[RMDB]
RNA sequence: GGGAACGACUCGAGUAGAGUCGAAAAUCAGUAACUUCUUCAAUCGACUUGCCUGUCGUAUCUAAUGUCACUGCAUCAUCUGCUUUUCUUAAUGGUGAUAUUUCACGGUUCAUGUCAUAUUGAUCACAAUCCUUCGGUGAUUCGUCACCGAAGGAUUAAAAGAAACAACAACAACAAC
Reactivity to DMS in 0.01 (KOAc 150mM, MgCl2 10mM, bicine 150mM(pH8.5), 24C), signal-to-noise 2, nucleotides 027 to 126: u000c080a040g020u010a060a100c140u010u000c030u000u000c070a090a140u000c070g020a040c040u000u000g010c110c030u010g030u000c030g030u010a060u000c040u000a110a110u010g000u010c020a040c060u010g000c060a050u000c120a070u010c160u000g000c050u010u000u020u000c060u010u000a050a130u010g010g000u010g010a030u000a040u000u020u010c040a070c070g010g040u000u000c050a030u000g010u000c070a080u000a110u000u000g000a070u000c060a090c200
Reactivity to 2A3 in 0.01 (KOAc 150mM, MgCl2 10mM, bicine 150mM(pH8.5), 24C), signal-to-noise 3, nucleotides 027 to 126: u060c010a000g110u090a080a130c040u090u060c000u110u080c060a030a080u080c020g030a030c020u030u100g030c000c020u020g000u090c010g030u090a130u010c030u040a060a040u070g070u080c010a000c050u080g020c000a020u040c000a040u020c130u070g010c050u150u100u110u000c050u040u150a120a100u110g040g020u000g000a010u030a090u090u100u060c030a030c050g000g020u020u030c020a010u020g000u040c020a010u040a080u270u120g060a060u110c020a030c070